[RMDB]
RNA sequence: GGGAACGACUCGAGUAGAGUCGAAAAUAGGAGGUGUAGCAGAGGCAGGAUGUUUACAGCCGAUGGAUGUCAUCAAAACUCGCCUGCAGCUUGACAAGGCCAAGCAGUACACUGGCAUUGUCAACUGCUUCCUGUCCCAAUUCGUUGGGACAGGAAGAAAAGAAACAACAACAACAAC
Reactivity to DMS in 0.01 (KOAc 150mM, MgCl2 10mM, bicine 150mM(pH8.5), 24C), signal-to-noise 6, nucleotides 027 to 126: u000a060g010g010a070g010g010u000g010u000a050g010c020a060g010a170g000g010c050a080g020g000a080u000g010u000u000u000a090c090a100g010c040c050g010a130u010g020g010a120u000g010u000c060a070u000c080a060a060a090a150c080u000c080g000c030c020u000g000c010a010g010c240u000u000g010a010c000a010a010g000g020c000c000a030a060g020c080a110g000u010a100c200a110c040u000g000g000c010a040u000u000g000u000c000a010a020c020u000g000
Reactivity to 2A3 in 0.01 (KOAc 150mM, MgCl2 10mM, bicine 150mM(pH8.5), 24C), signal-to-noise 4, nucleotides 027 to 126: u160a010g000g040a020g020g020u070g010u080a020g050c050a030g020a050g060g000c020a020g030g060a070u090g070u180u160u120a080c040a030g040c020c050g030a030u070g030g030a060u080g080u160c030a060u020c010a070a030a030a120c020u020c050g030c010c000u010g000c010a010g000c100u000u010g010a010c000a000a000g010g000c000c000a100a020g060c090a040g220u110a040c080a020c100u010g000g000c010a010u010u010g000u010c000a000a010c020u010g000
The record gives the reactivity of an RNA of 177 nucleotides to DMS and 2A3. For 2A3 the reverse transcriptase was SuperScript II with manganese. The data come from the RNA Mapping Database (RMDB), library OK2TRN. Values cover nucleotides 27 to 126.